The record gives the reactivity of an RNA of 177 nucleotides to DMS and 2A3. The reactions ran in a buffer of 150 mM KOAc, 10 mM MgCl2 and 150 mM bicine (pH 8.5), at 24 C. Reactivities are given for positions 27 through 126. Source: RMDB library OK2TRN, as collected in RNAgym. For DMS, 980 sequencing reads were counted. For 2A3 the reverse transcriptase was SuperScript II with manganese.

RNA sequence: GGGAACGACUCGAGUAGAGUCGAAAAUGAACAUGGAAGUAAAAAUUAUUGAUGCAGUUAUUGGUAUCAAAGCACCCUACUUCUGUGGGGGAUUUAUCCUGGUGGACCAGAUAACAGGCACAGCCUGCCCACUCAAAGGUUUCGACCUUUGAGUGGGAAAAGAAACAACAACAACAAC
Reactivity to DMS in 0.01 (KOAc 150mM, MgCl2 10mM, bicine 150mM(pH8.5), 24C), signal-to-noise 1, nucleotides 027 to 126: u000g000a220a150c020a030u000g000g000a030a020g010u010a010a070a050a060a110u020u020a050u010u010g000a000u000g000c010a040g010u010u020a080u010u060g020g000u000a000u000c000a010a020a160g020c240a060c110c080c020u000a000c000u000u000c030u010g030u000g000g010g000g000g000a070u000u010u000a030u000c080c020u010g000g010u000g050g000a130c080c030a050g000a050u000a090a120c070a030g000g000c020a120c170a120g010c030c020u000g000
Reactivity to 2A3 in 0.01 (KOAc 150mM, MgCl2 10mM, bicine 150mM(pH8.5), 24C), signal-to-noise 1, nucleotides 027 to 126: u050g030a000a000c000a070u010g050g040a030a000g020u080a030a120a070a170a150u240u140a160u050u160g030a000u000g050c020a020g110u170u130a160u300u300g040g020u020a020u070c000a000a020a010g010c000a050c040c000c000u000a000c000u000u070c030u030g010u030g030g040g010g020g000a010u140u010u060a120u070c020c010u040g000g060u080g030g090a130c050c000a020g010a070u080a080a080c000a000g070g000c030a010c050a300g000c010c020u010g060
Annotation
For DMS the reverse transcriptase was MarathonRT.